RNA sequence: GGGAACGACUCGAGUAGAGUCGAAAAGAUCGGAUGUAUAUAGCUAAAGAGGGAUAUUGUUAUCUCAACAUUUUCUUGGCGAUGCUGGUCAAUGUAAAUGAGGAUGAGGCUAAAGACUUCACCAAAAGUAGGUAUGCGACUUCGGUCGCAUACCUACAAAAGAAACAACAACAACAAC
Reactivity to 2A3 in 0.01 (KOAc 150mM, MgCl2 10mM, bicine 150mM(pH8.5), 24C), signal-to-noise 1, nucleotides 027 to 126: g030a000u120c000g000g000a000u140g030u000a120u000a300u140a280g020c000u060a000a180a000g120a300g000g000g070a000u000a000u000u120g180u100u200a000u000c090u000c000a000a160c100a000u020u030u020u020c000u000u000g000g000c000g120a120u000g000c000u030g010g000u000c000a160a150u300g000u040a110a120a000u120g000a140g070g200a160u040g000a000g090g080c020u110a020a010a020g000a000c000u000u030c000a180c060c000a060a020a020a020

Structure probing data (2A3) for a 177-nucleotide construct. The reactions ran in a buffer of 150 mM KOAc, 10 mM MgCl2 and 150 mM bicine (pH 8.5), at 24 C.